[RMDB]
RNA sequence: GGGAACGACUCGAGUAGAGUCGAAAACUCCACGUGAUGUCCGAGCAAUGGCAGAGUCCUAGGCAUCACACAUCUUCGGGCGAUGCUGAAUCAAAUGGCGGGGCUAGGCAUCGCACCUCUAUCCGGUCACGGAUAUCAGGUUCGCCUGAUAUCCGUGAAAAGAAACAACAACAACAAC
Reactivity to 2A3 in 0.01 (KOAc 150mM, MgCl2 10mM, bicine 150mM(pH8.5), 24C), signal-to-noise 2, nucleotides 027 to 126: c020u000c000c010a070c030g000u010g000a010u010g020u100c050c100g000a000g060c030a100a160u300g000g000c200a210g130a080g300u080c000c020u020a000g010g010c000a010u000c000a000c010a000c000a060u070c050u210u140c070g020g030g030c020g000a010u030g000c000u000g020a080a080u090c090a120a040a240u130g070g040c080g000g030g000g000c010u010a040g020g000c010a040u010c000g040c040a240c000c000u070c000u040a130u020c020c000g080g040u040